[RMDB]
RNA sequence: GGGAACGACUCGAGUAGAGUCGAAAAGAUCGCGAUGCCAAAAUGGAGAGUUUGCGCAAGAAACUAAAGACGGACGAUGAAAUGAACUGGGUGGAUGUGAGUCGCACAUUGCGGGAGCAGGGAAUAAUACCAGUACUAUGUUCGCAUAGUACUGGUAAAAAGAAACAACAACAACAAC
Reactivity to DMS in 0.01 (KOAc 150mM, MgCl2 10mM, bicine 150mM(pH8.5), 24C), signal-to-noise 7, nucleotides 027 to 126: g000a090u000c070g020c060g020a090u000g020c030c040a050a070a080a100u010g010g000a080g000a090g000u000u000u000g010c090g010c110a070a100g010a080a070a070c070u000a070a080a120g000a080c060g010g000a060c070g000a070u000g010a080a070a060u010g000a060a090c070u000g000g010g030u000g000g010a060u000g000u000g010a080g020u000c080g010c060a060c100a080u000u000g020c040g020g000g000a070g010c050a040g000g000g010a080a060u000a060a130
Reactivity to 2A3 in 0.01 (KOAc 150mM, MgCl2 10mM, bicine 150mM(pH8.5), 24C), signal-to-noise 4, nucleotides 027 to 126: g050a060u070c020g000c020g060a010u050g030c010c020a040a070a050a140u140g020g010a080g000a000g050u040u070u060g010c030g000c010a030a040g090a090a080a030c100u130a140a050a020g070a020c030g020g000a010c020g030a030u090g080a030a060a070u080g020a040a040c030u050g020g040g020u070g050g010a020u030g030u040g060a040g050u060c020g030c030a020c010a070u040u150g010c030g010g000g010a040g030c030a020g010g010g040a110a030u130a120a030